[RMDB]
RNA sequence: GGGAACGACUCGAGUAGAGUCGAAAAGCAUUCUUUUUGACUACUUUUCUCUAGCGUGCCAUUUUAGUUUUUGACGGCAGAUUCGAAUGAACUUAAGUUUAUGAUGAAGGUAUGGCUGUUGAGAUUAUUUGGUCGGGAUUGUAGUUUGAAGAUGUGCGAUUGGAUUACGGUUCGCCGUAAUCCAAUCAAAAGAAACAACAACAACAAC
Reactivity to 2A3 in 0.01 (KOAc 150mM, MgCl2 10mM, bicine 150mM(pH8.5), 24C), signal-to-noise 3, nucleotides 027 to 156: g010c010a040u200u200c000u030u040u090u130u180g030a010c010u040a050c000u030u060u090u080c030u000c090u120a070g140c050g140u140g020c000c010a040u000u040u000u110a060g010u010u020u000u070u130g010a000c000g010g000c030a040g010a140u020u000c010g040a030a030u010g000a020a000c020u180u170a300a030g020u000u000u020a020u040g070a050u170g010a020a010g100g090u190a100u180g170g010c010u000g010u010u020g000a000g000a010u000u020a020u020u020u020g040g000u050c040g000g020g000a000u000u000g000u000a000g000u010u030u040g010a020a010g010a010u050g040u030g050c060